[RMDB]
RNA sequence: GGGAACGACUCGAGUAGAGUCGAAAACACAGCACGCGGUAGCAGAGGUGCUGCGAUACGCUGUGUAGUAUCAUAUCACAGUUCUUUGCUACCUCGUGCUUCGCAAAAACGCCGUGUUCGCACGGCGCCUAUUGCUGUGCUUCGGCACAGCAAUAGGAAAAGAAACAACAACAACAAC
Reactivity to DMS in 0.01 (KOAc 150mM, MgCl2 10mM, bicine 150mM(pH8.5), 24C), signal-to-noise 2, nucleotides 027 to 126: c060a140c250a020g000c000a020c020g030c230g000g030u000a010g020c000a010g010a000g010g000u010g020c000u000g020c050g010a020u000a010c080g010c110u010g010u030g020u000a100g040u000a050u000c100a120u000a040u000c040a030c000a010g000u000u010c000u000u000u000g010c000u000a000c010c000u000c000g010u000g000c000u010u000c060g020c120a020a070a030a110a260c010g020c000c000g020u000g010u000u010c270g050c000a020c010g010g000c000g030
Reactivity to 2A3 in 0.01 (KOAc 150mM, MgCl2 10mM, bicine 150mM(pH8.5), 24C), signal-to-noise 2, nucleotides 027 to 126: c040a000c010a010g000c000a000c000g000c010g000g000u000a000g020c000a000g010a000g030g040u150g010c010u010g040c020g000a010u010a030c040g010c130u100g080u110g040u260a040g010u030a030u080c040a030u040a020u220c030a000c000a040g030u060u000c020u040u000u000g000c010u000a000c000c000u000c010g000u000g000c000u000u010c010g000c000a040a070a020a000a000c030g010c000c000g010u010g010u030u040c120g000c070a000c020g000g000c000g010

Chemical mapping of a 177-nucleotide RNA with DMS and 2A3. 2A3 adducts were read by reverse transcription with SuperScript II with manganese.